[RMDB]
RNA sequence: GGGAACGACUCGAGUAGAGUCGAAAACUCACACACAGAGGAUGAGAAUAAGCCAGAACACUUGUGAUUUUAAUUGGGUUAAAAUGAUAAGGACCCACACUCCAGAGUCAGACUAAUCUGGGUUCAGAUUCCAGCAGAAGAAUAAGACUUUAAAAGACCUGAGGUGAUUAUUCGUAAUCACCUCAGGAAAAGAAACAACAACAACAAC
Reactivity to 2A3 in 0.01 (KOAc 150mM, MgCl2 10mM, bicine 150mM(pH8.5), 24C), signal-to-noise 1, nucleotides 027 to 156: c000u000c000a000c000a020c000a000c060a000g010a050g040g000a030u030g000a030g080a060a060u170a050a090g000c000c020a020g020a090a000c020a000c020u010u000g000u020g020a190u050u000u070u110a140a200u140u080g000g020g000u050u060a240a110a060a040u230g090a020u050a140a110g070g000a030c010c000c010a000c000a000c020u050c000c020a000g020a030g000u080c050a000g000a230c050u050a210a040u010c000u020g000g000g090u000u000c120a030g050a080u120u000c000c000a000g000c000a000g060a020a000g150a200a000u300a070a100g110a020c000u150u210u300a040a300a230a020g100a120
The data come from the RNA Mapping Database (RMDB), library OK3TST. This 207-nucleotide RNA was probed chemically with 2A3. 2A3 adducts were read by reverse transcription with SuperScript II with manganese. The RNA was probed in 150 mM KOAc, 10 mM MgCl2 and 150 mM bicine (pH 8.5) at 24 C. Reactivities are given for positions 27 through 156.